Overview:
This 177-nucleotide RNA was probed chemically with 2A3 and DMS. The reactions ran in a buffer of 150 mM KOAc, 10 mM MgCl2 and 150 mM bicine (pH 8.5), at 24 C. The data come from the RNA Mapping Database (RMDB), library RFMREP. For DMS, 1,566 sequencing reads were counted.
[RMDB]
RNA sequence: GGGAACGACUCGAGUAGAGUCGAAAAGGAUCACCGGUUCAUCACGUCGUUUAUUCGGUUGAUAACGAAACACCGUCCUGCUCAGCGAUAACGUCCUGCAUGCCUGGCGUAUGCUCAUCGUAAACUGCGAAAUAACUGUCUUCGGACAGUUAUUUCGAAAAGAAACAACAACAACAAC
Reactivity to 2A3 in 0.01 (KOAc 150mM, MgCl2 10mM, bicine 150mM(pH8.5), 24C), signal-to-noise 2, nucleotides 027 to 126: g050g000a030u020c040a020c030c000g060g000u050u050c020a030u010c000a000c070g120u080c020g000u040u050u060a150u120u060c020g000g030u020u130g070a070u070a120a050c040g000a060a060a000c020a030c020c020g000u010c020c000u010g020c020u020c050a020g000c010g030a030u040a100a050c030g030u050c000c020u040g000c000a020u080g000c000c020u030g080g000c030g020u030a050u110g010c020u050c070a090u060c040g090u070a030a110a180c080u060g060
Reactivity to DMS in 0.01 (KOAc 150mM, MgCl2 10mM, bicine 150mM(pH8.5), 24C), signal-to-noise 2, nucleotides 027 to 126: g000g010a120u000c080a070c080c020g000g000u020u000c130a040u000c090a070c160g020u000c040g000u010u000u010a090u000u010c010g000g030u010u030g010a040u000a080a090c090g010a070a050a080c140a050c050c040g000u000c010c020u010g000c050u000c040a060g000c050g000a100u010a090a070c140g000u010c000c020u000g010c080a050u010g030c060c010u000g000g060c060g000u000a030u000g020c030u000c090a040u020c080g000u010a050a100a140c080u000g000